[RMDB]
RNA sequence: GGGAACGACUCGAGUAGAGUCGAAAAGAUAUGGAUUCGCUUUCGAGGAUCCAUAUAUCUUGUACGUAACAUCAGUCGGAAACGACUGUGGUACAAGAUAUAUGGGGAGAAAGGCGAAUCCUAAGUCGUUCCCUAACUUGUUCGCAAGUUAGGGAACAAAAGAAACAACAACAACAAC
Reactivity to DMS in 0.01 (KOAc 150mM, MgCl2 10mM, bicine 150mM(pH8.5), 24C), signal-to-noise 1, nucleotides 027 to 126: g010a090u020a300u010g010g000a000u000u000c000g010c010u000u010u000c000g000a140g060g000a030u000c000c000a010u000a010u000a000u000c000u000u000g000u000a000c020g000u000a070a150c180a040u020c000a010g020u000c000g040g000a110a180a220c000g020a010c000u000g000u010g000g000u000a010c000a030a030g010a010u000a000u010a000u000g000g000g000g000a000g000a000a000a030g010g020c010g000a010a000u000c020c000u000a030a130g030u010c130
Reactivity to 2A3 in 0.01 (KOAc 150mM, MgCl2 10mM, bicine 150mM(pH8.5), 24C), signal-to-noise 2, nucleotides 027 to 126: g100a060u190a130u210g000g000a010u010u020c010g000c040u000u020u000c130g120a300g080g030a000u010c000c000a010u000a010u000a000u020c000u000u000g000u000a000c050g120u160a290a050c030a270u300c000a000g000u000c000g100g000a080a100a150c010g000a000c020u000g000u020g030g000u000a000c000a000a000g030a000u000a000u000a000u000g010g000g000g020a030g060a010a020a030g180g000c000g010a010a000u010c000c000u010a080a020g090u020c050